[RMDB]
This 177-nucleotide RNA was probed chemically with DMS. The RNA was probed in 150 mM KOAc, 10 mM MgCl2 and 150 mM bicine (pH 8.5) at 24 C. Source: RMDB library OK2TST, as collected in RNAgym. DMS adducts were read by reverse transcription with MarathonRT.
RNA sequence: GGGAACGACUCGAGUAGAGUCGAAAAGGUCUCUAGGAGGGGGCGGGCCUGCGAUGAGGGUCCAGGGAAGAGCCAUCCUUGGGCAGCUGCUCCUGAGGCCCCGGCACUGCCCUCGGUGCCCCCAGCACAUUGUACGCGGGUUCGCCCGCGUACAAUGAAAAGAAACAACAACAACAAC
Reactivity to DMS in 0.01 (KOAc 150mM, MgCl2 10mM, bicine 150mM(pH8.5), 24C), signal-to-noise 1, nucleotides 027 to 126: g000g000u000c030u000c040u000a040g020g010a200g010g000g000g010g010c020g000g000g000c080c070u010g000c100g020a100u000g030a070g010g010g010u000c010c020a020g000g000g010a180a070g010a130g010c080c070a090u010c040c070u000u010g000g020g010c060a080g050c130u000g020c110u010c000c000u000g010a040g010g010c030c010c050c100g030g000c000a080c040u000g000c000c000c010u000c040g000g020u020g010c010c000c010c050c000a140g030c180a170